[RMDB]
RNA sequence: GGGAACGACUCGAGUAGAGUCGAAAAGAUAUGGAGUUGAACUACACGUGAAGGUUCGUUGAAAUCGGAAACGAUGGAGAACUGGAGGCGUGCAACUCCUAAGUCAAAAGUAGUCUUCGGACUACAACCUACAUGACGGGUUCGCCCGUCAUGUAGGAAAAGAAACAACAACAACAAC
Reactivity to 2A3 in 0.01 (KOAc 150mM, MgCl2 10mM, bicine 150mM(pH8.5), 24C), signal-to-noise 1, nucleotides 027 to 126: g030a020u060a030u210g010g000a010g010u000u020g040a130a050c140u170a020c300a010c060g100u180g040a030a050g070g000u070u000c020g110u300u060g050a010a040a030u020c020g030g000a070a000a040c020g010a010u010g040g000a040g000a040a000c010u010g040g060a040g030g230c020g000u020g040c000a000a000c000u000c010c000u010a090a010g040u030c020a000a010a060a190g020u020a000g010u000c010u000u140c300g000g020a020c010u020a010c000a000a000
Reactivity to DMS in 0.01 (KOAc 150mM, MgCl2 10mM, bicine 150mM(pH8.5), 24C), signal-to-noise 1, nucleotides 027 to 126: g010a060u000a300u020g010g000a010g000u020u010g000a140a080c040u010a290c010a000c010g040u000g020a300a190g000g000u000u000c020g000u000u010g000a110a110a010u000c000g030g000a080a020a230c010g030a010u000g000g010a010g030a020a010c010u000g000g020a180g000g020c010g000u030g030c030a000a000c010u000c000c000u000a010a040g010u000c040a010a080a100a170g010u000a030g010u000c000u000u000c270g010g000a000c000u000a020c000a060a040